Structure probing data (2A3) for a 207-nucleotide construct.
Source: RMDB library M2RFPK, as collected in RNAgym.
Conditions: 150 mM KOAc, 10 mM MgCl2 and 150 mM bicine (pH 8.5), 24 C.
RNA sequence: GGGAACGACUCGAGUAGAGUCGAAAAACUGAUACCUUACGAGGUAUCAGAAUGACUUCGUGGUAGAGCGCCACGAACGGAAAAUAAAGAAAGCUCGAUUGAAACGCACCGUGUACGGACGGUGCGAAAAAGUCGAUCCAGUUCGCUGGAUCGACAACUAGAACUUUGUGUUCGCACAAAGUUCUAGAAAAGAAACAACAACAACAAC
Reactivity to 2A3 in 0.01 (KOAc 150mM, MgCl2 10mM, bicine 150mM(pH8.5), 24C), signal-to-noise 2, nucleotides 027 to 156: a000c000u000g000a000u000a000c000c000u010u010a020c240g070a030g000g020u000a000u000c000a000g020a030a030u120g060a030c060u000u000c010g010u010g040g020u030a200g010a000g000c010g020c000c000a000c010g000a000a010c020g080g040a050a030a000a050u090a000a020a000g160a000a040a000g010c020u000c000g090a140u080u280g040a150a080a010c010g000c000a000c000c000g020u000g080u250a060c020g030g020a000c000g000g000u000g010c000g000a000a000a000a000a000g000u000c000g010a000u000c000c000a020g040u080u110c210g080c060u000g000g010a000u000c000g000a000c000a000a000